[RMDB]
RNA sequence: GGGAACGACUCGAGUAGAGUCGAAAAGAUAUGGAUCGUCACGCAGCGAUAAGCAGCCAUCGGAAACGAUGGGCUGCUUUUGACGCUGCGGACGAUCCUAAGUCAAAGUCGAACUUCGGUUCGACAACAUUUAAUGUUUCUUCGGAAACAUUAAAUGAAAAGAAACAACAACAACAAC
Reactivity to 2A3 in 0.01 (KOAc 150mM, MgCl2 10mM, bicine 150mM(pH8.5), 24C), signal-to-noise 4, nucleotides 027 to 126: g030a020u070a040u160g000g000a040u010c030g020u020c070a090c300g020c020a010g000c030g090a080u030a160a010g000c000a000g010c020c000a000u010c020g040g020a110a060a030c020g000a020u090g010g040g010c000u020g020c000u010u000u000u000g010a010c040g000c000u010g000c000g000g000a000c000g000a000u000c010c000u000a010a000g000u000c040a090a080a080g000u000c000g000a010a000c010u080u120c300g130g010u010u010c000g010a000c000a000a020
Reactivity to DMS in 0.01 (KOAc 150mM, MgCl2 10mM, bicine 150mM(pH8.5), 24C), signal-to-noise 9, nucleotides 027 to 126: g010a040u000a300u010g010g000a000u000c000g010u000c000a230c010g020c010a010g010c000g020a110u000a020a020g010c000a010g010c000c000a020u000c000g010g000a160a090a200c000g010a010u000g020g030g010c000u000g000c000u000u000u000u000g020a210c100g010c000u000g010c000g000g000a000c000g010a000u000c000c000u000a010a080g010u000c040a110a140a140g010u000c000g010a010a010c000u000u010c230g020g000u000u000c000g010a010c010a070a130

Overview:
The record gives the reactivity of an RNA of 177 nucleotides to 2A3 and DMS. The data come from the RNA Mapping Database (RMDB), library TTRDES. For 2A3, 20,675 sequencing reads were counted. 2A3 adducts were read by reverse transcription with SuperScript II with manganese. Values cover nucleotides 27 to 126.